[RMDB]
Source: RMDB library OK1LIB, as collected in RNAgym. Structure probing data (2A3 and DMS) for a 177-nucleotide construct.

RNA sequence: GGGAACGACUCGAGUAGAGUCGAAAAAUCAUAUUUAGUUUGAAGCACCCAUGUUUACCUGGUAUGUAACAUAGACAAGUUCAAACUAACAUUCCGGGCUCUGGUUUCCUUCUGUGAAAUGGGGAUAGCUAGUCGGUAUAUUCGUAUACCGACUAGCAAAAGAAACAACAACAACAAC
Reactivity to 2A3 in 0.01 (KOAc 150mM, MgCl2 10mM, bicine 150mM(pH8.5), 24C), signal-to-noise 3, nucleotides 027 to 126: a000u080c060a080u120a150u140u050u020a070g000u010u010u010g020a050a010g090c030a040c030c000c040a030u030g050u020u060u060a040c030c020u110g050g000u180a070u100g020u010a010a040c010a030u070a040g100a070c080a080a080g020u030u050c010a010a010a010c000u020a010a000c020a090u070u070c000c000g000g030g020c010u020c000u070g090g020u050u070u020c010c000u110u240c080u080g170u050g080a030a080a070u120g010g020g020g030a040u070a050
Reactivity to DMS in 0.01 (KOAc 150mM, MgCl2 10mM, bicine 150mM(pH8.5), 24C), signal-to-noise 3, nucleotides 027 to 126: a110u010c120a090u030a070u000u020u000a030g020u000u000u010g010a010a040g010c120a130c150c060c040a010u010g000u000u030u000a030c010c120u010g060g020u000a100u040g010u020a020a020c050a000u010a100g000a040c090a100a170g030u000u000c010a000a000a040c010u000a030a050c250a070u000u000c010c010g020g000g000c040u010c080u010g000g020u000u000u020c010c000u010u060c110u000g040u040g020a050a090a060u020g000g000g000g000a110u030a110
The DMS profile rests on 3,343 reads. Conditions: 150 mM KOAc, 10 mM MgCl2 and 150 mM bicine (pH 8.5), 24 C.